[RMDB]
This 177-nucleotide RNA was probed chemically with DMS and 2A3. For DMS the reverse transcriptase was MarathonRT.
RNA sequence: GGGAACGACUCGAGUAGAGUCGAAAAUAGAAGUCGUCCCUUUAUGGGCUCAAAUUUAGAACGAUAUAGUAAAGCUUAUUGCCAAAGACUUAAACUACUUUGUAGUAAAAGUGAUAAUACGAUAGCUAUCAUUGCGUGGAUUCGUCCACGCAAUGAUAAAAGAAACAACAACAACAAC
Reactivity to DMS in 0.01 (KOAc 150mM, MgCl2 10mM, bicine 150mM(pH8.5), 24C), signal-to-noise 1, nucleotides 027 to 126: u010a070g000a030a030g010u000c040g010u020c000c000c000u030u030u030a100u120g000g000g120c100u020c120a080a080a140u050u040u020a130g000a140a070c090g020a030u060a090u060a100g000u000a090a060a140g000c030u000u000a010u000u000g000c100c120a030a030a030g000a030c000u000u000a010a170a020c050u000a000c010u010u080u030g030u000a060g000u010a040a070a020a010g000u000g000a100u030a070a140u000a050c060g010a130u000a040g050c080u000
Reactivity to 2A3 in 0.01 (KOAc 150mM, MgCl2 10mM, bicine 150mM(pH8.5), 24C), signal-to-noise 2, nucleotides 027 to 126: u070a000g130a050a000g000u000c000g020u020c000c000c030u080u160u140a080u100g000g000g000c030u060c190a120a070a020u270u270u060a100g010a020a020c040g050a070u080a050u050a180g120u040a180a000a000g010c030u140u150a010u020u030g010c000c000a040a100a020g040a130c000u080u040a220a030a000c030u050a040c000u110u110u300g000u000a020g000u000a030a040a040a040g000u010g030a040u010a300a050u110a120c040g080a050u000a040g020c020u040
2A3 adducts were read by reverse transcription with SuperScript II with manganese. The RNA was probed in 150 mM KOAc, 10 mM MgCl2 and 150 mM bicine (pH 8.5) at 24 C. The data come from the RNA Mapping Database (RMDB), library RFM100.